An RNA of 177 nucleotides, treated with DMS and 2A3 and read out base by base.
As a SHAPE reagent, 2A3 marks flexible, mostly unpaired nucleotides at the ribose 2'-OH.
Source: RMDB library OK2TST, as collected in RNAgym.
The RNA was probed in 150 mM KOAc, 10 mM MgCl2 and 150 mM bicine (pH 8.5) at 24 C.
For DMS the reverse transcriptase was MarathonRT.

RNA sequence: GGGAACGACUCGAGUAGAGUCGAAAAUAAAUAUGGUGACAAAGCUAUAGUUUAUCUUUGAACUCAUAAAGGAACAGGCCAAAGUUAUGUAGGUUCAUCACUUAAUGUUAAAGGUCGAUUUGGGAGCCUAAGCGGACUAGUUCGCUAGUCCGCUUAGAAAAGAAACAACAACAACAAC
Reactivity to DMS in 0.01 (KOAc 150mM, MgCl2 10mM, bicine 150mM(pH8.5), 24C), signal-to-noise 2, nucleotides 027 to 126: u030a040a060a060u000a040u000g000g010u000g030a230c140a080a110a130g010c030u000a020u000a040g000u000u010u010a010u000c040u000u010u000g010a090a060c030u010c050a090u000a060a050a100g010g020a070a070c100a100g010g020c070c020a030a120a090g000u000u000a020u010g030u010a050g010g040u010u010c030a060u000c110a040c040u000u000a080a050u000g010u000u000a050a090a060g000g010u000c050g000a110u000u000u000g020g010g060a090g030c130
Reactivity to 2A3 in 0.01 (KOAc 150mM, MgCl2 10mM, bicine 150mM(pH8.5), 24C), signal-to-noise 1, nucleotides 027 to 126: u050a000a090a020u120a010u060g020g010u040g060a150c080a100a050a000g000c030u040a050u090a150g060u020u210u000a040u090c000u110u050u110g030a010a010c000u000c000a060u140a150a150a020g090g000a110a030c040a140g000g030c040c000a010a000a000g050u030u050a040u080g040u000a040g060g170u120u060c000a000u000c000a050c000u030u060a120a060u170g030u180u140a150a070a000g000g010u010c000g040a060u120u020u040g020g030g080a000g060c000